Background
An RNA of 177 nucleotides, treated with DMS and read out base by base. The RNA was probed in 150 mM KOAc, 10 mM MgCl2 and 150 mM bicine (pH 8.5) at 24 C.
[RMDB]
RNA sequence: GGGAACGACUCGAGUAGAGUCGAAAAGAUAUGGAGCCAAUUGGACAUGCUGGGUCGGAAACGACCCUGCAACAGCCAAUGGCUCCUAAGUCAAACGGGACUGUCCACUUCGGUGGACAGUCCCGAACUAUCCCAUGCCGUUCGCGGCAUGGGAUAGAAAAGAAACAACAACAACAAC
Reactivity to DMS in 0.01 (KOAc 150mM, MgCl2 10mM, bicine 150mM(pH8.5), 24C), signal-to-noise 1, nucleotides 027 to 126: g000a040u000a220u010g000g000a020g000c010c000a050a100u010u010g000g010a130c110a220u000g020c000u000g000g000g030u000c000g000g000a040a080a080c000g020a030c000c000c000u020g020c000a000a060c300a170g000c000c030a010a010u020g000g000c000u000c000c000u000a020a050g000u000c010a060a180a270c040g020g000g000a020c000u000g010u030c000c010a010c000u010u010c180g020g030u000g000g000a000c030a000g010u000c000c000c000g010a000a010
The DMS profile rests on 770 reads. Reactivities are given for positions 27 through 126. Values are in units of 0.01, from 0 to 300, in steps of 10.